Chemical mapping of a 177-nucleotide RNA with DMS and 2A3. For DMS, 926 sequencing reads were counted.
RNA sequence: GGGAACGACUCGAGUAGAGUCGAAAAAAGACGACCAAAACACCCCGUGUCUCGCUGUGCCUUCGGGUGCCGAGCACUCCCUCCCUCCGCCGGGUCUGAAAGAACGAUUUUCGGCUGGAGAUGACAGGUGAUAAUAAUGCUUCGGCAUUAUUAUCACAAAAGAAACAACAACAACAAC
Reactivity to DMS in 0.01 (KOAc 150mM, MgCl2 10mM, bicine 150mM(pH8.5), 24C), signal-to-noise 2, nucleotides 027 to 126: a050a090g030a090c150g010a110c100c060a120a020a080a100c100a120c060c010c010c130g010u000g010u000c000u000c000g020c170u040g050u000g010c000c020u010u010c210g040g020g020u000g000c010c010g000a030g000c010a110c010u000c020c010c000u000c080c070c000u000c020c000g000c000c020g040g000g000u020c000u010g000a100a140a110g020a160a140c160g020a030u000u000u010u020c000g010g020c000u010g030g010a050g010a100u000g000a100c240a070g030
Reactivity to 2A3 in 0.01 (KOAc 150mM, MgCl2 10mM, bicine 150mM(pH8.5), 24C), signal-to-noise 1, nucleotides 027 to 126: a000a020g170a100c150g000a030c050c040a000a020a010a020c030a040c010c010c010c020g030u010g030u040c010u000c000g030c130u080g010u020g000c000c010u010u040c080g110g000g010u000g000c000c000g030a000g000c000a000c040u020c000c000c010u010c000c010c000u000c000c000g060c000c010g020g000g010u030c000u000g030a050a020a020g030a160a020c070g000a010u020u000u090u120c000g010g040c100u180g010g000a030g020a020u080g020a030c030a030g140